The record gives the reactivity of an RNA of 177 nucleotides to 2A3 and DMS.
2A3 adducts were read by reverse transcription with SuperScript II with manganese.
[RMDB]
RNA sequence: GGGAACGACUCGAGUAGAGUCGAAAAGAAGAUAAGAAACCAGACACCGUGGGCAGAUGACAAGAAAGUCCGUCGGUGUCGGUAAGGUCGUCAGUCACAGGCGACCGUUUUCUGUGACUGUAAAGAAGCCUACCCAGUAUUUCGAUACUGGGUAGGCAAAAGAAACAACAACAACAAC
Reactivity to 2A3 in 0.01 (KOAc 150mM, MgCl2 10mM, bicine 150mM(pH8.5), 24C), signal-to-noise 2, nucleotides 027 to 126: g040a000a000g070a000u140a100a000g030a120a100a000c020c020a020g000a000c000a000c000c000g010u000g000g000g000c040a040g060a190u130g090a290c200a270a000g000a080a100a000g020u000c000c030g100u090c040g010g000u070g000u000c000g000g000u040a050a010g050g020u030c080g010u050c040a010g030u000c070a020c070a030g000g000c070g020a120c010c110g000u110u020u000u070c040u030g000u000g060a040c030u070g030u060a000a180a000g190a140a000
Reactivity to DMS in 0.01 (KOAc 150mM, MgCl2 10mM, bicine 150mM(pH8.5), 24C), signal-to-noise 2, nucleotides 027 to 126: g000a030a060g000a010u010a070a100g000a050a110a020c020c000a070g060a000c010a000c010c000g090u000g000g060g000c010a020g030a190u060g000a220c300a140a070g000a120a220a110g010u000c000c020g030u090c000g000g030u000g000u000c000g000g010u000a020a010g000g000u000c010g010u000c000a100g030u030c280a150c170a130g000g000c020g010a010c000c020g000u010u000u000u000c000u000g020u020g010a190c090u000g000u020a030a070a150g000a160a130